[RMDB]
RNA sequence: GGGAACGACUCGAGUAGAGUCGAAAAGAAUUGGUAUGUAAGCUACUUCUUCCGGUAGCUGCGUCACACUUUAAGAGUGUGCAUACUGAGCCGAAGCUCAGCUUCGGUCCCCCAAGGGAAGCGCAAAAGUACGCUCAGCAUUCGUGCUGAGCGUACUAAAAGAAACAACAACAACAAC
Reactivity to 2A3 in 0.01 (KOAc 150mM, MgCl2 10mM, bicine 150mM(pH8.5), 24C), signal-to-noise 1, nucleotides 027 to 126: g100a000a180u000u000g000g000u000a000u000g000u000a050a000g000c000u000a000c000u010u030c000u000u000c000c000g000g000u000a000g000c000u000g000c010g000u010c000a010c010a010c010u040u080u180a300a010g290a000g280u000g000u000g000c000a000u000a000c000u000g010a000g000c000c000g030a000a010g000c000u090c300a050g040c090u000u000c000g010g000u000c000c000c000c000c020a010a000g090g000g010a000a000g000c000g000c020a060a110a000